An RNA of 177 nucleotides, treated with DMS and read out base by base. The RNA was probed in 150 mM KOAc, 10 mM MgCl2 and 150 mM bicine (pH 8.5) at 24 C.

[RMDB]
RNA sequence: GGGAACGACUCGAGUAGAGUCGAAAAUUGCAACAGGCACGCAUUGACAAGAGUAAGUUUGCACAAUAGCACCGCCUGAUUGUUUUCGUGGAAGACGUUGGUGCAUUCCUGCAAAAACACCUCAGCAAUCGUGGAGCUAGUUCGCUAGCUCCACGAUAAAAGAAACAACAACAACAAC
Reactivity to DMS in 0.01 (KOAc 150mM, MgCl2 10mM, bicine 150mM(pH8.5), 24C), signal-to-noise 1, nucleotides 027 to 126: u030u000g000c030a080a070c060a080g000g000c030a090c090g030c100a060u000u000g000a270c160a040a070g010a080g020u040a100a130g000u000u000u000g000c040a030c030a010a100u000a220g010c000a140c110c050g010c120c070u000g020a130u000u000g040u000u000u000u000c030g030u000g050g000a080a030g010a060c060g010u010u000g020g010u010g000c010a090u000u000c040c020u000g000c080a030a030a130a060a020c090a070c070c000u000c070a070g040c180a170